The record gives the reactivity of an RNA of 177 nucleotides to DMS and 2A3. It was measured as part of the RMDB library TTRDEL. Reactivities are given for positions 27 through 126. For 2A3, 10,194 sequencing reads were counted.
[RMDB]
RNA sequence: GGGAACGACUCGAGUAGAGUCGAAAAGAUAUGGACUCUUGGGAACUAUGAAGUCACAGUGGUCGGAAACGACCAUCACAGUGGAGUUCAGAGAGUCCUAAGUCAAACGCAAUCUUCGGAUUGCGAAUCAAUAACGGUUGUUCGCAACCGUUAUUGAAAAAGAAACAACAACAACAAC
Reactivity to DMS in 0.01 (KOAc 150mM, MgCl2 10mM, bicine 150mM(pH8.5), 24C), signal-to-noise 5, nucleotides 027 to 126: g000a030u000a160u010g000g000a010c000u000c000u010u000g010g020g000a030a010c020u000a160u010g010a160a120g020u010c020a020c030a180g010u000g000g010u010c000g000g000a050a040a110c010g000a010c000c010a000u010c100a090c300a150g000u000g010g000a090g000u000u000c000a300g000a020g000a030g000u000c000c000u000a010a060g000u000c010a090a110a220c020g000c000a010a010u000c000u010u020c220g010g000a020u000u000g000c000g000a030a040
Reactivity to 2A3 in 0.01 (KOAc 150mM, MgCl2 10mM, bicine 150mM(pH8.5), 24C), signal-to-noise 5, nucleotides 027 to 126: g010a010u020a010u030g000g020a000c010u010c030u060u060g300g120g010a010a010c010u030a150u300g260a300a090g140u210c000a000c010a020g010u000g000g010u000c010g000g000a010a020a010c000g000a010c000c000a010u050c020a010c010a010g010u020g060g130a240g020u000u000c020a020g000a010g000a000g020u000c000c000u000a020a000g000u000c030a020a060a050c020g000c000a000a000u000c020u040u080c300g110g000a010u000u010g000c000g010a020a080